[RMDB]
RNA sequence: GGGAACGACUCGAGUAGAGUCGAAAAGGGGAGUGUGAUGUAAGAACUGUUUUCCCAGGUAAAGAACUCUGGCAACAUUCUGCAGUCCCUGGAAAAGCUGUGUUCCCUUCAGGGGUGUGGAUUUGUGAUCCUGGAGUCCAUUCGUGGACUCCAGGAUAAAAGAAACAACAACAACAAC
Reactivity to DMS in 0.01 (KOAc 150mM, MgCl2 10mM, bicine 150mM(pH8.5), 24C), signal-to-noise 1, nucleotides 027 to 126: g000g070g000g010a070g000u010g010u040g010a070u000g040u000a090a050g160a100a030c080u000g010u000u000u000u000c080c000c000a300g000g000u010a030a090a180g010a100a040c090u030c000u080g000g090c300a120a000c050a090u030u000c010u030g000c000a050g020u000c000c000c000u000g000g000a030a110a000a060g010c090u010g000u030g000u000u000c000c000c000u020u060c000a040g000g030g000g000u000g030u000g000g000a010u000u000u000g010u020g040